[RMDB]
RNA sequence: GGGAACGACUCGAGUAGAGUCGAAAAAUCUUGGCGAAGUCAGCGCGGAAGGAGCGCGCAACUCCUUACCCUCGCCUUUUUUUUUCCGCACCCGUUCGCGAAAGCGUUCAGCGGAAAAGGGACCAAACAUUGUGUUUAUCUUCGGAUAAACACAAUGAAAAGAAACAACAACAACAAC
Reactivity to DMS in 0.01 (KOAc 150mM, MgCl2 10mM, bicine 150mM(pH8.5), 24C), signal-to-noise 2, nucleotides 027 to 126: a060u010c090u000u000g020g010c020g020a040a080g010u020c190a100g000c150g020c250g020g020a060a020g000g010a020g020c020g010c250g000c200a080a070c010u000c010c000u000u010a120c050c000c030u000c020g010c010c000u000u010u000u000u000u010u000u000u000c010c000g000c010a100c100c100c110g000u000u000c000g010c000g010a090a070a150g010c000g000u000u000c020a070g000c000g000g000a010a000a010a010g000g000g000a120c080c060a080a090a180
Reactivity to 2A3 in 0.01 (KOAc 150mM, MgCl2 10mM, bicine 150mM(pH8.5), 24C), signal-to-noise 2, nucleotides 027 to 126: a010u070c070u050u090g040g040c010g040a050a020g170u190c090a050g150c030g010c090g050g020a030a020g040g010a010g000c070g010c030g030c100a040a160c010u010c000c020u010u120a300c000c000c000u000c010g020c000c000u030u080u040u000u000u000u020u010u020c020c000g000c010a050c040c070c040g020u020u020c000g020c000g040a110a030a020g000c000g000u000u000c020a020g000c010g000g030a000a000a000a010g010g000g020a050c040c030a050a040a050
Source: RMDB library M2PK90, as collected in RNAgym. An RNA of 177 nucleotides, treated with DMS and 2A3 and read out base by base.